The record gives the reactivity of an RNA of 177 nucleotides to DMS and 2A3.
The DMS profile rests on 665 reads.
DMS adducts were read by reverse transcription with MarathonRT.
For 2A3, 1,275 sequencing reads were counted.
2A3 adducts were read by reverse transcription with SuperScript II with manganese.
RNA sequence: GGGAACGACUCGAGUAGAGUCGAAAACACUACACCACAGAUGUUCACUUAUCGGCUGCUGCAGCAGGCCCGUUCGGACCUCAUGCGCAUCGUCCUUCCCGAAGGGGACGACGAUCGCAUCCUCAAAGUCCGAGGUUGGUUUCGACCAACCUCGGACAAAAGAAACAACAACAACAAC
Reactivity to DMS in 0.01 (KOAc 150mM, MgCl2 10mM, bicine 150mM(pH8.5), 24C), signal-to-noise 1, nucleotides 027 to 126: c000a040c060u060a120c100a130c040c040a000c100a180g000a100u000g000u000u000c130a060c000u000u070a180u000c010g000g000c100u000g100c160u000g190c040a030g000c100a000g000g000c010c000c000g040u000u090c000g000g040a170c000c000u000c200a200u000g040c000g030c300a060u000c000g000u000c000c040u060u010c000c000c000g020a060a160g000g000g000g120a000c300g000a000c200g030a000u000c000g000c000a000u000c000c160u000c060a140a070a000
Reactivity to 2A3 in 0.01 (KOAc 150mM, MgCl2 10mM, bicine 150mM(pH8.5), 24C), signal-to-noise 2, nucleotides 027 to 126: c040a000c030u080a030c020a030c040c000a020c030a060g050a150u100g050u060u050c070a110c080u070u110a050u120c030g020g020c030u020g010c030u100g000c050a000g020c020a040g030g010c000c010c010g000u090u060c010g020g060a050c000c040u090c000a000u000g000c020g020c090a020u000c010g000u000c000c010u060u030c010c000c010g140a180a120g020g010g000g020a000c000g000a000c010g000a010u000c000g000c010a010u070c010c020u040c050a110a050a000